[RMDB]
RNA sequence: GGGAACGACUCGAGUAGAGUCGAAAAGCUGAGCGCGCGCGUGAUCCGGCCGCUAGACGUACGCACUCGAUCCGUACGAUCGGCCCAGUGCGCGGAUCCACACACUGAUCAGUACAGUGCGCCACACGACUAACCAAGUCUUCGGACUUGGUUAGUCAAAAGAAACAACAACAACAAC
Reactivity to DMS in 0.01 (KOAc 150mM, MgCl2 10mM, bicine 150mM(pH8.5), 24C), signal-to-noise 2, nucleotides 027 to 126: g020c130u000g000a190g050c030g040c060g020c010g000c040g010u040g010a120u030c160c160g000g000c030c020g000c130u000a090g000a070c020g020u030a010c030g010c130a100c130u010c160g010a080u000c160c020g000u010a060c010g000a110u020c030g030g000c020c050c120a150g030u010g050c000g000c040g000g000a060u000c000c040a130c070a060c030a030c010u010g000a080u010c060a040g040u000a130c000a040g000u000g020c000g030c020c060a080c090a130c190
Reactivity to 2A3 in 0.01 (KOAc 150mM, MgCl2 10mM, bicine 150mM(pH8.5), 24C), signal-to-noise 2, nucleotides 027 to 126: g040c060u020g020a000g060c030g010c010g000c000g020c010g160u100g080a130u040c090c030g040g020c010c030g030c010u040a080g040a030c000g000u000a010c010g010c030a080c100u180c080g230a230u000c030c010g000u020a000c010g050a150u030c000g020g000c020c000c010a030g030u010g010c110g000c000g010g010a020u080c040c010a010c000a010c000a000c060u030g020a070u150c050a040g080u090a060c020a010g010u040g040c020g030c020c010a050c010a010c040